The data come from the RNA Mapping Database (RMDB), library M2RFPK.
Structure probing data (2A3) for a 207-nucleotide construct.
Values cover nucleotides 27 to 156.
For 2A3, 621 sequencing reads were counted.
RNA sequence: GGGAACGACUCGAGUAGAGUCGAAAAGUGCCUCGUCGGCCCGGCAUGCCAACCUGAUCCGAAGUUCAAGUUGGUUUCUCUGGCCUUCCAGAGAGAUGCGCGUCGGAAGAACCGACGAACAAACCUUAAAACAAAACGACGUUCGCGUCGUUUUGAACGGUAAAGCAGAGUUCGCUCUGCUUUACCGAAAAGAAACAACAACAACAAC
Reactivity to 2A3 in 0.01 (KOAc 150mM, MgCl2 10mM, bicine 150mM(pH8.5), 24C), signal-to-noise 1, nucleotides 027 to 156: g030u030g090c010c000u000c000g010u000c000g040g020c100c000c000g010g030c010a050u060g020c020c010a010a020c000c000u010g010a010u060c130c140g270a210a090g020u040u000c010a040a000g000u020u020g070g000u020u140u000c030u000c000u000g010g010c040c030u260u100c000c000a000g000a000g000a000g000a040u240g070c090g020c070g060u050c010g050g000a020a030g010a060a030c000c000g000a000c020g030a080a030c020a020a060a080c010c030u190u210a020a130a110a070c030a000a000a000a000c000g000a000c010g000u050u080c090g010c010g010u000c000g040u040u030u000u000g000a000a010